[RMDB]
An RNA of 177 nucleotides, treated with 2A3 and DMS and read out base by base.
RNA sequence: GGGAACGACUCGAGUAGAGUCGAAAAGAAAAUAAAGCGCACCUAUAAGGUGGUGCGGAACAAGCGUGACCUAGGAACACGCAUCCACGCGUCUCCUAAGACGCGAAAGGUAUUCCAAAUAAAAAAACAACAUGAGUAACUUCGGUUACUCAUGUUGAAAAGAAACAACAACAACAAC
Reactivity to 2A3 in 0.01 (KOAc 150mM, MgCl2 10mM, bicine 150mM(pH8.5), 24C), signal-to-noise 2, nucleotides 027 to 126: g000a000a060a000a030u200a060a040a010g140c010g010c000a000c020c020u060a080u060a300a070g200g030u080g000g030u020g000c000g000g020a030a030c040a090a040g000c000g000u020g010a040c010c100u130a060g020g110a090a000c000a000c000g000c010a010u050c020c010a020c030g000c020g010u020c030u050c020c040u050a090a050g030a000c030g020c020g010a060a020a010g030g000u030a080u060u040c020c030a010a090a000u220a060a090a010a020a020a000a030
Reactivity to DMS in 0.01 (KOAc 150mM, MgCl2 10mM, bicine 150mM(pH8.5), 24C), signal-to-noise 2, nucleotides 027 to 126: g000a110a110a080a000u010a060a080a210g010c040g030c010a020c000c000u020a180u010a130a130g020g000u000g010g020u000g010c000g000g000a050a090c200a120a050g030c020g000u000g000a130c110c130u000a130g010g000a070a130c000a000c010g010c000a110u000c030c030a170c030g020c010g000u000c010u000c210c150u000a060a070g040a010c010g020c010g030a000a040a050g000g010u010a100u010u000c020c050a050a120a120u080a070a010a050a100a100a010a190
The RNA was probed in 150 mM KOAc, 10 mM MgCl2 and 150 mM bicine (pH 8.5) at 24 C. Reactivities are rounded to 0.1 and cut off at 0 and 3.